[RMDB]
Chemical mapping of a 177-nucleotide RNA with 2A3 and DMS. For DMS the reverse transcriptase was MarathonRT. Conditions: 150 mM KOAc, 10 mM MgCl2 and 150 mM bicine (pH 8.5), 24 C.
RNA sequence: GGGAACGACUCGAGUAGAGUCGAAAAGAUAUGGACCAUUCCAACAGCCACCAUUCGGAAACGAAUGUGUGGACAUGGAUGGUCCUAAGUCAAAACCCGCUUCAUCUGUUCGCAGAUGAAGCGGGAAGUGAAUGUACUGCUUCGGCAGUACAUUCACAAAAGAAACAACAACAACAAC
Reactivity to 2A3 in 0.01 (KOAc 150mM, MgCl2 10mM, bicine 150mM(pH8.5), 24C), signal-to-noise 1, nucleotides 027 to 126: g010a020u040a050u110g030g010a040c010c000a030u300u080c010c000a080a060c090a220g040c000c000a010c000c010a000u020u010c000g050g030a050a050a070c010g000a010a030u050g160u180g020u000g020g010a020c030a020u000g000g000a000u030g020g000u000c000c000u000a010a010g000u000c030a030a020a030a060c010c000c010g000c030u000u050c000a020u000c000u000g100u120u110c300g040c120a000g000a020u000g000a010a000g000c000g000g020g020a000a020
Reactivity to DMS in 0.01 (KOAc 150mM, MgCl2 10mM, bicine 150mM(pH8.5), 24C), signal-to-noise 1, nucleotides 027 to 126: g000a020u000a300u000g010g000a000c000c000a020u000u000c000c000a010a060c280a200g010c040c000a020c000c000a000u000u010c000g000g020a070a060a140c000g000a020a000u000g000u010g050u000g000g010a040c040a100u000g010g000a020u000g020g000u010c000c000u000a000a030g000u000c020a130a070a160a130c000c000c000g010c000u020u000c000a000u140c010u000g010u000u010c200g000c000a010g000a000u000g010a020a000g000c000g010g020g000a010a010